[RMDB]
RNA sequence: GGGAACGACUCGAGUAGAGUCGAAAAGGUCUGAAACUCCUGACCUCAAGUGAUCCACCCACUUCUGCCUCCCAAAGUGCUGGAGUUACAGGUGUGAGCCACCAUGCCUGGCCUGCAUUGAGGUUUUAAAAGCAUUAUAGGAAUAGGGUGUAGAUUAUACUAUCCUCGUCUUCGGACGAGGAUAGUAAAAAGAAACAACAACAACAAC
Reactivity to 2A3 in 0.01 (KOAc 150mM, MgCl2 10mM, bicine 150mM(pH8.5), 24C), signal-to-noise 1, nucleotides 027 to 156: g000g000u010c010u020g050a100a060a160c040u030c000c040u000g060a040c000c000u030c030a100a040g070u040g040a030u010c000c000a000c010c000c000a000c000u070u000c030u060g030c000c010u000c040c050c010a090a060a000g030u020g030c020u050g000g050a100g010u090u120a020c000a010g020g020u020g000u010g050a060g030c030c030a050c030c040a010u030g020c010c030u010g000g030c000c000u000g000c000a010u060u080g020a050g100g000u030u090u070u190a070a080a000a020g030c010a020u040u070a060u120a200g020g000a050a030u040a050g000g000g000u000g000u030a030g020a040u020u050a050
Reactivity to DMS in 0.01 (KOAc 150mM, MgCl2 10mM, bicine 150mM(pH8.5), 24C), signal-to-noise 2, nucleotides 027 to 156: g010g010u000c010u020g000a120a040a130c040u000c000c030u000g010a070c030c030u000c020a090a100g030u010g010a040u000c000c030a060c030c000c020a070c040u000u000c040u000g000c030c020u000c020c030c040a090a070a090g000u000g030c040u000g010g000a160g020u000u010a040c010a070g020g020u020g050u000g000a090g000c080c010a080c060c010a050u000g000c000c020u010g020g030c010c020u000g000c040a040u050u010g010a160g020g010u000u000u000u000a050a090a070a100g000c000a060u010u000a140u000a110g010g010a070a130u000a070g000g000g040u000g010u010a060g010a090u010u000a090

This 207-nucleotide RNA was probed chemically with 2A3 and DMS.
High DMS reactivity at an A or C suggests that its Watson-Crick edge is free.
The DMS profile rests on 4,127 reads.
For 2A3, 711 sequencing reads were counted.